[RMDB]
This 177-nucleotide RNA was probed chemically with 2A3 and DMS. For 2A3 the reverse transcriptase was SuperScript II with manganese. Conditions: 150 mM KOAc, 10 mM MgCl2 and 150 mM bicine (pH 8.5), 24 C.
RNA sequence: GGGAACGACUCGAGUAGAGUCGAAAAGAACAUUUGUUAUCAUUGGUCACAUUGAAAAUGUGAAAUAAGCACCUACAACAUAGACUUUACAACACUUCAUGGUUCGAUCCGUGAGGUGUUUUUCUAACUAACUACGCACGUUCGCGUGCGUAGUUAGAAAAGAAACAACAACAACAAC
Reactivity to 2A3 in 0.01 (KOAc 150mM, MgCl2 10mM, bicine 150mM(pH8.5), 24C), signal-to-noise 3, nucleotides 027 to 126: g040a060a010c050a100u120u110u210g030u110u090a140u140c060a090u040u160g080g030u050c010a000c010a020u080u190g080a120a040a050a020u010g010u030g040a050a050a090u210a100a030g020c020a040c020c010u020a050c030a040a000c030a110u090a010g090a070c030u090u190u190a110c090a020a000c000a000c000u010u000c000a010u020g010g050u090u210c100g070a280u040c040c000g000u000g000a000g000g010u000g000u010u000u000u000u000c000u000a000a010
Reactivity to DMS in 0.01 (KOAc 150mM, MgCl2 10mM, bicine 150mM(pH8.5), 24C), signal-to-noise 1, nucleotides 027 to 126: g040a040a010c090a020u000u000u020g020u000u000a040u030c160a050u000u060g000g000u000c060a010c000a050u040u000g070a110a110a090a050u020g000u000g000a020a000a000u000a120a090g000c080a130c140c100u000a010c120a030a040c120a080u060a000g000a250c090u000u000u000a070c060a080a000c010a000c020u000u000c000a010u000g030g050u000u000c250g000a090u000c040c010g020u000g020a020g030g000u000g070u000u000u000u000u000c010u000a100a260